[RMDB]
RNA sequence: GGGAACGACUCGAGUAGAGUCGAAAAGCUCAACGCUUCGGCGUUGAGCAAAGAAAAUCCGUGCGAAGGGCUGGCUAGGGACGCACGGAAACCCACCGCCCAAAACUGAGAGGUUCGCCUCUCAGAACAAUCUAGUAGGCUUCGGCCUACUAGAUUGAAAAGAAACAACAACAACAAC
Reactivity to DMS in 0.01 (KOAc 150mM, MgCl2 10mM, bicine 150mM(pH8.5), 24C), signal-to-noise 1, nucleotides 027 to 126: g000c000u000c000a010a000c000g010c000u010u000c240g060g040c000g030u000u000g000a000g020c010a000a050a050g000a140a040a110a030u000c000c000g030u010g020c000g000a190a140g000g000g050c000u020g000g000c090u010a110g010g040g030a140c010g020c000a000c000g000g040a010a050a050c010c020c000a080c080c060g020c000c000c000a120a060a090a110c000u000g000a000g010a000g010g020u000u000c160g060c000c000u020c000u000c030a020g000a110a150
Reactivity to 2A3 in 0.01 (KOAc 150mM, MgCl2 10mM, bicine 150mM(pH8.5), 24C), signal-to-noise 1, nucleotides 027 to 126: g000c000u020c000a000a010c000g000c030u060u160c300g110g000c000g000u000u020g000a010g010c000a000a000a000g040a010a090a020a040u000c020c010g010u010g010c020g100a150a100g100g070g040c070u060g050g030c070u060a120g050g020g070a020c020g000c000a010c010g000g000a050a010a000c010c000c000a010c030c020g030c010c000c000a040a100a030a050c010u000g000a000g010a000g000g040u080u050c110g060c050c000u000c020u000c000a000g010a020a020